[RMDB]
RNA sequence: GGGAACGACUCGAGUAGAGUCGAAAAGUCUUGAAUGACGACAACGCCAUUAGGAAUCUGUUCAACGCCACUCUCAAUGGUGGUAAAUACAAGCUUCAUCCAGAAGCAAAAUCUGCAACUGGAAAAACAACUAGCUGUUAUUCGUAACAGCUAGUUGAAAAGAAACAACAACAACAAC
Reactivity to DMS in 0.01 (KOAc 150mM, MgCl2 10mM, bicine 150mM(pH8.5), 24C), signal-to-noise 4, nucleotides 027 to 126: g020u000c010u000u000g000a070a060u010g000a020c040g000a180c300a100a100c050g010c020c020a030u000u000a080g010g010a050a030u000c120u000g010u000u000c100a100a090c220g000c040c020a020c020u000c110u000c090a110a130u010g000g010u000g000g020u010a010a050a110u010a080c190a070a100g000c060u000u000c100a130u000c010c010a040g010a070a300g000c010a010a040a050a130u010c150u000g010c030a020a280c020u000g000g000a000a040a080a060a150
Reactivity to 2A3 in 0.01 (KOAc 150mM, MgCl2 10mM, bicine 150mM(pH8.5), 24C), signal-to-noise 4, nucleotides 027 to 126: g000u020c010u060u130g240a280a200u130g010a030c020g020a010c040a060a110c070g040c030c010a040u070u100a040g050g030a040a060u060c050u080g040u120u080c040a070a040c080g010c020c010a040c010u080c000u040c060a070a140u170g010g000u000g000g000u020a050a020a010u150a010c030a050a030g030c030u070u070c020a060u010c010c010a010g000a000a000g000c000a000a080a010a220u070c050u030g000c000a010a030c020u000g000g000a020a060a020a070a070
An RNA of 177 nucleotides, treated with DMS and 2A3 and read out base by base. For 2A3 the reverse transcriptase was SuperScript II with manganese. DMS adducts were read by reverse transcription with MarathonRT. For 2A3, 5,172 sequencing reads were counted. The reactions ran in a buffer of 150 mM KOAc, 10 mM MgCl2 and 150 mM bicine (pH 8.5), at 24 C.